An RNA of 177 nucleotides, treated with DMS and 2A3 and read out base by base. The 2A3 profile rests on 3,152 reads. For DMS the reverse transcriptase was MarathonRT. The data come from the RNA Mapping Database (RMDB), library OK1LIB. For DMS, 1,693 sequencing reads were counted.
RNA sequence: GGGAACGACUCGAGUAGAGUCGAAAACCAACCUGAGGGUUGGAAUUAAGAAGGCCCUCAAUUCAAAACAGGGGCCACUGGAGCUUAGGGAUGGCUCCAAUACCAGACCUCCCGAUAUCCAACACAGCGAAUGCACGAAAUUCGUUUCGUGCAUUCGAAAAGAAACAACAACAACAAC
Reactivity to DMS in 0.01 (KOAc 150mM, MgCl2 10mM, bicine 150mM(pH8.5), 24C), signal-to-noise 2, nucleotides 027 to 126: c000c050a070a110c100c010u000g010a130g020g010g010u060u010g000g000a000a020u010u040a170a070g010a160a080g000g000c010c000c010u020c080a080a120u040u030c270a140a050a080a220c300a250g000g000g000g000c030c000a000c150u000g000g000a000g000c100u000u040a100g000g000g030a110u000g000g030c010u020c000c000a010a040u000a050c250c100a150g000a030c080c060u000c000c040c010g000a090u010a070u000c020c020a070a020c040a070c070a130g000
Reactivity to 2A3 in 0.01 (KOAc 150mM, MgCl2 10mM, bicine 150mM(pH8.5), 24C), signal-to-noise 4, nucleotides 027 to 126: c000c000a010a020c010c020u090g070a200g040g110g000u020u020g000g030a030a050u090u070a130a120g140a100a100g020g000c020c000c010u060c010a030a090u180u130c020a000a030a070a080c060a030g020g000g010g000c010c010a010c020u000g000g000a000g010c010u050u110a140g060g090g040a090u160g030g000c000u000c010c000a000a010u110a080c030c000a020g050a060c000c030u010c020c000c010g000a040u050a040u120c040c020a060a040c080a050c030a090g050